[RMDB]
RNA sequence: GGGAACGACUCGAGUAGAGUCGAAAAUCGUUGGCGCUGGCCGCCUCAAGCAUGUUUGUGAAACCGCUGGCGUCCGUUAAGUCGAGGUUAUAGUCUCCGGUUACGUCUAUGUUUGGCGUUACUGCGCAUUAGCUCAUCCUUUCGAGGAUGAGCUAAUAAAAGAAACAACAACAACAAC
Reactivity to 2A3 in 0.01 (KOAc 150mM, MgCl2 10mM, bicine 150mM(pH8.5), 24C), signal-to-noise 1, nucleotides 027 to 126: u040c030g010u030u130g030g000c040g000c050u020g020g000c020c010g060c040c010u010c020a040a060g080c040a130u140g120u100u130u140g160u030g030a060a060a090c010c020g000c020u020g010g010c010g040u000c030c000g020u070u130a150a030g080u030c050g020a080g000g010u120u010a090u020a170g130u020c020u000c000c000g030g000u000u010a000c000g000u000c030u050a160u200g200u120u120u090g000g000c020g000u010u020a040c020u030g050c050g000c060
Reactivity to DMS in 0.01 (KOAc 150mM, MgCl2 10mM, bicine 150mM(pH8.5), 24C), signal-to-noise 3, nucleotides 027 to 126: u000c040g010u010u000g020g010c020g000c070u010g010g030c080c120g020c080c030u000c120a070a100g020c090a100u010g020u000u000u000g030u000g020a070a080a060c060c240g010c020u000g050g010c010g010u010c010c030g010u010u010a060a140g010u010c010g020a060g000g010u000u000a100u020a120g010u010c010u010c030c020g020g010u000u000a020c020g020u000c010u000a110u010g020u000u000u000g010g010c010g000u000u000a040c030u000g000c120g010c140